The record gives the reactivity of an RNA of 177 nucleotides to 2A3 and DMS. For DMS, 746 sequencing reads were counted. The RNA was probed in 150 mM KOAc, 10 mM MgCl2 and 150 mM bicine (pH 8.5) at 24 C.
[RMDB]
RNA sequence: GGGAACGACUCGAGUAGAGUCGAAAACGCAUUGUAAGUUCGCGUCACCGUUCAAAGCAUUUUCAGUAGACGUUACACUUUGAAUUGCUUGUUCAACAGCUUGCUUAUCUUUAUUCGUACCAUGAUCUGUUCACCUGCUGUUCGCAGCAGGUGAACAAAAAGAAACAACAACAACAAC
Reactivity to 2A3 in 0.01 (KOAc 150mM, MgCl2 10mM, bicine 150mM(pH8.5), 24C), signal-to-noise 1, nucleotides 027 to 126: c000g040c000a040u000u090g020u010a030a030g040u000u100c050g010c000g040u000c050a050c050c030g040u060u010c080a110a060a050g000c000a020u030u070u050u160c030a070g060u090a020g090a150c040g010u090u180a070c060a040c110u000u050u100g010a020a050u080u020g040c000u000u030g010u040u020c060a080a070c000a080g010c000u050u070g010c020u000u010a060u110c020u000u160u060a190u030u060c000g050u000a110c000c030a080u130g040a080u110c080
Reactivity to DMS in 0.01 (KOAc 150mM, MgCl2 10mM, bicine 150mM(pH8.5), 24C), signal-to-noise 1, nucleotides 027 to 126: c040g010c160a100u020u000g000u010a070a080g000u000u000c120g040c040g010u000c070a180c250c060g010u010u030c080a010a030a060g010c010a050u000u010u000u000c080a050g030u000a020g030a250c200g000u000u000a080c260a050c020u020u010u010g000a040a030u000u010g010c180u000u000g020u020u010c070a070a060c140a040g000c030u000u000g000c010u010u000a020u010c040u000u000u010a110u000u000c060g010u000a080c020c060a100u000g000a080u010c120